An RNA of 177 nucleotides, treated with 2A3 and DMS and read out base by base. Reactivities are given for positions 27 through 126. It was measured as part of the RMDB library OK2TRN. For 2A3 the reverse transcriptase was SuperScript II with manganese. The reactions ran in a buffer of 150 mM KOAc, 10 mM MgCl2 and 150 mM bicine (pH 8.5), at 24 C. For DMS the reverse transcriptase was MarathonRT.

RNA sequence: GGGAACGACUCGAGUAGAGUCGAAAAUUCGGCCAGCAAUUUGCACGCCUCCAGACGGUCUUCAUACUCUUCGGCGUGGCACAUGGACGAGAAGAUAGUGCCAUCAGAGGUCCGGUACACCAGUUCACCUGGAAAACGUAUUCGUACGUUUUCCAGGAAAAGAAACAACAACAACAAC
Reactivity to 2A3 in 0.01 (KOAc 150mM, MgCl2 10mM, bicine 150mM(pH8.5), 24C), signal-to-noise 2, nucleotides 027 to 126: u040u030c040g020g040c010c000a030g080c060a080a190u080u120u170g050c040a020c050g000c020c030u030c020c000a020g000a030c040g080g000u040c000u060u040c060a040u050a180c020u020c030u090u090c070g020g020c030g030u020g040g130c030a020c010a050u120g090g050a020c050g000a110g040a200a010g030a030u150a050g090u100g040c000c010a000u020c020a000g030a060g070g000u050c010c000g000g000u080a060c080a060c070c000a000g020u090u100c020a020
Reactivity to DMS in 0.01 (KOAc 150mM, MgCl2 10mM, bicine 150mM(pH8.5), 24C), signal-to-noise 2, nucleotides 027 to 126: u000u000c070g000g020c060c030a070g000c090a100a130u010u000u010g030c040a100c070g010c050c040u000c070c080a110g000a090c110g050g000u010c060u010u000c060a080u000a140c110u000c040u000u010c060g020g000c080g010u010g040g000c020a020c070a070u010g010g000a150c080g000a120g010a080a090g000a100u020a030g000u000g040c030c050a060u010c070a090g010a100g010g020u010c060c050g030g010u000a040c070a100c010c000a120g000u010u020c110a100